Source information
Source: RMDB library RFMREP, as collected in RNAgym. An RNA of 177 nucleotides, treated with DMS and read out base by base. For DMS the reverse transcriptase was MarathonRT. Conditions: 150 mM KOAc, 10 mM MgCl2 and 150 mM bicine (pH 8.5), 24 C. The DMS profile rests on 1,077 reads.
[RMDB]
RNA sequence: GGGAACGACUCGAGUAGAGUCGAAAAUCGAGGUUUUUCGUCGUGUCAACUUGCGAAGGGAAUUACGGGUUCUUGAUGAGCAUUGGUGAUAGGAGGUGUGGGCUUGGUUAGUAGAGGUAGAAUUAUGGAACGAAAUGUUGUUCGCAACAUUUCGUUCAAAAGAAACAACAACAACAAC
Reactivity to DMS in 0.01 (KOAc 150mM, MgCl2 10mM, bicine 150mM(pH8.5), 24C), signal-to-noise 1, nucleotides 027 to 126: u000c050g030a040g010g010u010u000u000u030u020c030g040u010c070g000u000g000u000c060a040a100c100u030u000g020c040g010a150a170g010g000g010a100a070u000u000a190c090g010g010g000u000u010c010u000u010g000a060u000g020a160g020c050a110u000u010g000g000u000g000a090u010a070g030g010a060g000g020u020g000u000g020g020g000c040u010u000g000g000u020u000a060g010u010a060g000a050g050g000u020a090g020a120a080u010u000a090u000g000